[RMDB]
RNA sequence: GGGAACGACUCGAGUAGAGUCGAAAACAACGCCUUUUUUUCCUAUCUUCUUUAGCACCGGGCUAGGGAGUAAGCCCGUGGAACCUUAGUUUUGUUCCCUCGGGACUUACUUGUGGUUCCUGUGGUGCACUCCUGACCCUGCUGCUAUACAAGAAAACUAGAGCACUAACUUCGGUUAGUGCUCUAGAAAAGAAACAACAACAACAAC
Reactivity to 2A3 in 0.01 (KOAc 150mM, MgCl2 10mM, bicine 150mM(pH8.5), 24C), signal-to-noise 1, nucleotides 027 to 156: c070a030a030c120g120c040c000u090u070u100u070u010u020u080c070c020u130a210u070c050u110u010c010u030u080u010a010g040c000a010c050c040g080g000g000c080u090a090g060g030g000a000g020u120a060a050g010c020c000c000g030u030g000g000a000a000c010c010u060u000a000g020u050u150u180u140g140u270u050c010c040c010u080c120g000g030g000a020c000u000u000a010c010u030u030g080u190g090g000u010u030c000c000u060g160u260g000g020u080g000c030a000c000u010c000c000u050g060a090c000c000c010u000g020c060u000g000c010u000a020u030a070c060a010a010g020a040a060a000a010